[RMDB]
RNA sequence: GGGAACGACUCGAGUAGAGUCGAAAAGUCGCCGACGCACAGUCAAACAUGCCCUUCGCUUUCGUCAUCAAAGAGCGGGCGGAUACCGCGGGCAGCUUGGAUCUCGUCGUUGCUGGCCCCAGCGGCAACGUGCAUGGCACUUCGGUGCCAUGCACGUAAAAGAAACAACAACAACAAC
Reactivity to 2A3 in 0.01 (KOAc 150mM, MgCl2 10mM, bicine 150mM(pH8.5), 24C), signal-to-noise 1, nucleotides 027 to 126: g060u020c000g020c110c010g040a010c040g040c010a020c040a070g050u040c010a000a020a070c040a140u040g020c030c010c000u050u140c080g020c050u060u080u070c020g100u030c040a080u020c030a280a080a000g130a040g050c130g030g020g000c020g020g000a100u070a040c020c020g000c040g060g020g010c030a000g010c000u040u060g100g010a070u040c020u050c100g040u030c050g080u010u060g050c080u080g060g110c010c000c000c000a040g010c050g020g000c010a020
Reactivity to DMS in 0.01 (KOAc 150mM, MgCl2 10mM, bicine 150mM(pH8.5), 24C), signal-to-noise 2, nucleotides 027 to 126: g030u000c030g040c030c020g010a100c050g000c110a050c080a060g000u020c030a040a010a110c070a170u000g010c000c000c040u000u000c090g000c050u000u000u000c070g020u010c030a080u030c080a070a080a210g010a080g010c160g000g020g000c030g000g010a050u000a040c130c050g050c300g000g000g010c040a020g020c090u010u010g000g000a010u000c040u010c060g010u000c090g020u000u030g000c020u020g010g000c040c020c020c040a150g030c040g040g000c050a030

Source information: Structure probing data (2A3 and DMS) for a 177-nucleotide construct. The RNA was probed in 150 mM KOAc, 10 mM MgCl2 and 150 mM bicine (pH 8.5) at 24 C. DMS adducts were read by reverse transcription with MarathonRT. The data come from the RNA Mapping Database (RMDB), library OK2TST.